[RMDB]
Record summary
An RNA of 177 nucleotides, treated with DMS and 2A3 and read out base by base. The reactions ran in a buffer of 150 mM KOAc, 10 mM MgCl2 and 150 mM bicine (pH 8.5), at 24 C. For 2A3, 8,418 sequencing reads were counted. 2A3 is a SHAPE reagent: it acylates the 2'-hydroxyl of flexible nucleotides of all four kinds. 2A3 adducts were read by reverse transcription with SuperScript II with manganese. Reactivities are given for positions 27 through 126.
RNA sequence: GGGAACGACUCGAGUAGAGUCGAAAAAAGCUCGAGGGCAGUUUCGAGGAACAGGGGAACGUCCUCUAUCAGGCCGCGGGCGGUCCGUACAUGACGCGCAACGAAGUUCGGGCACGGCAGAACCUACCGUAGCUAAAAAUUUCGAUUUUUAGCUACGAAAAGAAACAACAACAACAAC
Reactivity to DMS in 0.01 (KOAc 150mM, MgCl2 10mM, bicine 150mM(pH8.5), 24C), signal-to-noise 6, nucleotides 027 to 126: a090a100g010c020u000c030g020a040g000g000g010c020a100g010u000u010u000c120g010a090g010g000a060a050c110a120g020g010g000g010a090a110c160g010u000c000c000u000c020u000a030u010c060a060g000g010c030c020g010c060g000g000g010c010g000g010u010c020c030g010u000a070c100a100u000g000a070c080g000c050g010c070a070a110c090g010a110a120g000u010u000c050g010g010g020c040a040c070g010g000c040a050g000a100a120c040c020u000a090c220
Reactivity to 2A3 in 0.01 (KOAc 150mM, MgCl2 10mM, bicine 150mM(pH8.5), 24C), signal-to-noise 4, nucleotides 027 to 126: a000a010g020c020u010c010g010a020g000g020g030c030a040g030u030u060u130c050g020a040g030g030a100a090c060a130g060g050g030g030a070a080c050g050u010c010c000u000c010u000a070u060c010a010g050g010c010c010g020c020g010g010g010c000g000g010u000c010c010g000u020a030c020a110u130g070a040c030g020c010g000c090a070a070c070g100a080a040g010u070u060c010g010g020g000c040a030c020g030g000c020a030g030a100a050c000c010u050a020c040